[RMDB]
RNA sequence: GGGAACGACUCGAGUAGAGUCGAAAAAGUUAGGUUCGCUAUGGUGCAACUCUUUAAGGCAAUAACGAACUAAUUCUAAGCAAGUAAUGGAGAAAUGCCAGGGUCACUAUCUAGCAAUAAUAGUGCUGUAAGUGACUUAGAUUCGUCUAAGUCACAAUACUAUAUCUUGGUUCGCCAAGAUAUAGUAAAAAGAAACAACAACAACAAC
Reactivity to 2A3 in 0.01 (KOAc 150mM, MgCl2 10mM, bicine 150mM(pH8.5), 24C), signal-to-noise 8, nucleotides 027 to 156: a000g070u060u050a040g020g090u020u040c030g000c040u020a010u060g080g040u080g040c060a110a150c040u080c080u140u190u180a120a060g030g000c010a030a040u070a110a040c050g030a020a000c020u020a020a020u070u060c060u110a050a060g060c050a070a030g040u120a070a090u110g030g020a050g030a080a090a020u060g020c010c010a020g040g000g000u070c010a000c030u020a030u100c040u040a010g010c020a000a010u090a130a050u050a050g080u050g030c040u040g040u100a180a070g000u000g010a000c000u000u000a000g000a000u020u040c120g000u010c150u000a000a000g000u000c000a000c000a000a000
Reactivity to DMS in 0.01 (KOAc 150mM, MgCl2 10mM, bicine 150mM(pH8.5), 24C), signal-to-noise 6, nucleotides 027 to 156: a080g030u000u000a080g030g020u000u000c020g030c010u000a030u010g020g020u000g010c030a090a100c090u000c110u000u000u000a080a100g010g010c030a100a050u000a030a050c030g010a030a060c010u000a030a080u010u010c060u010a100a130g010c050a050a120g010u010a060a100u000g000g020a100g010a070a080a090u000g010c010c020a100g010g010g020u000c040a060c040u000a070u000c040u000a080g010c060a060a090u000a040a100u010a080g020u000g020c020u010g020u000a060a150g010u000g010a020c000u000u000a000g000a080u000u000c300g000u000c010u000a000a020g020u000c000a000c000a050a110
Background:
An RNA of 207 nucleotides, treated with 2A3 and DMS and read out base by base. It was measured as part of the RMDB library M2RFPK. 2A3 adducts were read by reverse transcription with SuperScript II with manganese. Values cover nucleotides 27 to 156. Conditions: 150 mM KOAc, 10 mM MgCl2 and 150 mM bicine (pH 8.5), 24 C.